[RMDB]
RNA sequence: GGGAACGACUCGAGUAGAGUCGAAAAGUCGCCGCGUCUACAUCAACGCCCAGCGCGGGCGAGGGAAGCGUCCUACGGGGGUGCCCCAUUCGCCGGCAUGGUAGAGGACGGCAAGAUUGCCGCGACGAUGACUACGACCAUUCGUGGUCGUAGUCAUAAAAGAAACAACAACAACAAC
Reactivity to DMS in 0.01 (KOAc 150mM, MgCl2 10mM, bicine 150mM(pH8.5), 24C), signal-to-noise 2, nucleotides 027 to 126: g010u000c000g020c060c220g040c030g000u000c010u000a110c090a160u010c040a060a140c050g010c110c000c010a080g000c110g070c040g010g000g000c010g010a030g000g010g010a110a080g010c030g000u000c000c000u000a140c200g000g010g010g000g000u010g010c030c010c000c010a120u010u000c050g010c020c010g030g020c010a040u010g000g020u000a170g010a160g010g020a060c050g020g000c060a080a040g000a040u000u010g060c020c130g000c010g010a020c040g000
Reactivity to 2A3 in 0.01 (KOAc 150mM, MgCl2 10mM, bicine 150mM(pH8.5), 24C), signal-to-noise 1, nucleotides 027 to 126: g000u020c000g020c030c010g030c030g000u010c000u040a020c010a080u070c030a070a040c050g010c030c010c010a070g040c300g080c130g210g000g000c000g030a020g000g010g020a120a090g030c000g030u000c020c000u000a070c150g190g000g000g030g020u020g000c000c000c000c040a080u070u080c020g010c010c010g040g010c020a040u020g040g000u060a070g010a060g100g040a050c030g020g010c010a000a030g030a080u250u300g010c010c030g000c000g000a010c040g030